[RMDB]
RNA sequence: GGGAACGACUCGAGUAGAGUCGAAAAAUCGUAGCCGUAAUUAGCGCAUAUUAAUAUUAGCGCAUGCAUGCAUAUAUCGUACGGCCGAUCGGCUACGCGUAAUUAGCUAAUUAAUCGUACGGCGCUAAGCUCAGGCAUCAUUCGUGAUGCCUGAGCUAAAAGAAACAACAACAACAAC
Reactivity to 2A3 in 0.01 (KOAc 150mM, MgCl2 10mM, bicine 150mM(pH8.5), 24C), signal-to-noise 1, nucleotides 027 to 126: a000u090c010g000u000a020g000c010c000g010u000a150a010u050u100a070g030c060g010c020a020u090a050u260u180a220a110u140a060u180u030a030g000c020g010c040a020u070g030c020a060u130g000c020a000u120a000u000a030u200c020g000u040a010c000g020g020c010c010g040a120u110c030g000g000c000u010a030c060g020c030g040u030a080a110u100u070a010g050c010u030a110a000u110u000a030a130u050c080g000u030a020c000g030g000c040g000c050u000a000
Reactivity to DMS in 0.01 (KOAc 150mM, MgCl2 10mM, bicine 150mM(pH8.5), 24C), signal-to-noise 1, nucleotides 027 to 126: a130u010c050g000u000a040g010c000c000g020u010a050a030u000u000a040g020c050g040c110a100u020a110u020u000a060a160u000a030u000u000a070g050c000g020c050a020u000g000c030a080u030g000c060a050u000a080u010a040u000c030g000u000a070c070g020g050c080c180g010a050u050c080g010g000c000u020a000c040g000c230g040u030a040a050u000u000a110g000c040u010a050a090u000u000a100a140u000c050g020u010a000c000g020g000c030g020c040u020a060
Conditions: 150 mM KOAc, 10 mM MgCl2 and 150 mM bicine (pH 8.5), 24 C. Structure probing data (2A3 and DMS) for a 177-nucleotide construct. DMS adducts were read by reverse transcription with MarathonRT.